[RMDB]
Structure probing data (2A3 and DMS) for a 170-nucleotide construct.
Conditions: 150 mM KOAc, 10 mM MgCl2 and 150 mM bicine (pH 8.5), 24 C.
The DMS profile rests on 152,927 reads.
Source: RMDB library 15KLIB, as collected in RNAgym.
The 2A3 profile rests on 116,828 reads.

RNA sequence: GGGAACGACUCGAGUAGAGUCGAAAACGGAGUCGACCUCCAUCUGAUCCGUCCGGGGCCUCUUCGCCGGGGGAGCCCCCUCCCCGUCCUUCCCUUUUCUGAUUAUUCCGACGAUGUUCCCCAGCCAUACCAGUUAAGUUCGCUUAACUGAAAAGAAACAACAACAACAAC
Reactivity to 2A3 in 0.01 (KOAc 150mM, MgCl2 10mM, bicine 150mM(pH8.5), 24C), signal-to-noise 9, nucleotides 027 to 129: c020g030g010a020g050u050c020g030a120c020c020u040c020c010a040u040c060u080g060a070u020c010c030g080u050c040c020g040g000g020g020c030c040u040c020u110u080c050g040c050c020g010g000g000g000g000a020g010c000c000c000c000c000u020c010c000c000c000g020u040c010c000u020u030c000c000c000u030u020u020u020c040u070g040a070u030u130a070u130u040c030c010g000a030c040g030a070u150g020u020u010c000c000c000c000a000g020c020c010a060u100a180c020
Reactivity to DMS in 0.01 (KOAc 150mM, MgCl2 10mM, bicine 150mM(pH8.5), 24C), signal-to-noise 9, nucleotides 027 to 129: c060g010g020a040g030u020c010g020a150c080c020u040c040c030a100u020c060u030g010a100u020c020c040g000u040c050c070g010g010g000g000c080c030u000c040u020u020c060g040c050c040g000g020g010g020g030a050g020c030c010c010c020c020u020c020c010c000c010g020u010c030c030u010u000c020c010c030u020u020u000u020c030u030g020a110u000u000a110u020u010c000c000g000a060c110g020a090u010g020u000u000c010c010c010c050a100g010c060c050a100u050a100c130